An RNA of 177 nucleotides, treated with DMS and 2A3 and read out base by base. For DMS, 1,175 sequencing reads were counted. DMS adducts were read by reverse transcription with MarathonRT. For 2A3, 1,739 sequencing reads were counted. The data come from the RNA Mapping Database (RMDB), library M2PK90.
[RMDB]
RNA sequence: GGGAACGACUCGAGUAGAGUCGAAAAAAAAAGGUAUAUCAAGCGAAGAUCGAAAGAUCAUGCUCGAUAGAUAUACAUCCCACAGGAAACUGAAUAUCGAGCAAUCGCUAAAAGCGAAAGCAAAAAAGAAGUACGUAAUGUUCGCAUUACGUACUUCAAAAGAAACAACAACAACAAC
Reactivity to DMS in 0.01 (KOAc 150mM, MgCl2 10mM, bicine 150mM(pH8.5), 24C), signal-to-noise 2, nucleotides 027 to 126: a030a020a000a050a040g000g010u010a010u000a010u000c010a190a060g000c050g010a200a060g000a010u000c000g010a060a130a100g000a020u000c000a090u030g000c070u000c000g000a010u000a080g000a010u000a010u010a000c010a060u000c030c000c000a210c110a060g000g000a060a110a210c070u000g000a120a170u000a010u000c040g000a040g040c050a160a260u000c010g020c000u000a010a030a070a100g040c000g010a030a070a260g010c030a020a000a060a050a080a060
Reactivity to 2A3 in 0.01 (KOAc 150mM, MgCl2 10mM, bicine 150mM(pH8.5), 24C), signal-to-noise 1, nucleotides 027 to 126: a000a000a000a000a010g150g000u050a010u010a000u020c020a040a040g100c020g040a100a030g010a030u000c010g020a080a050a050g000a010u010c000a020u070g000c030u010c020g010a030u000a090g010a000u020a000u000a010c010a010u020c010c090c000a010c030a000g180g000a170a050a000c060u080g010a180a060u050a030u070c020g020a000g050c000a030a060u010c020g010c000u080a050a060a120a140g010c010g000a010a040a010g000c000a000a070a050a140a000a000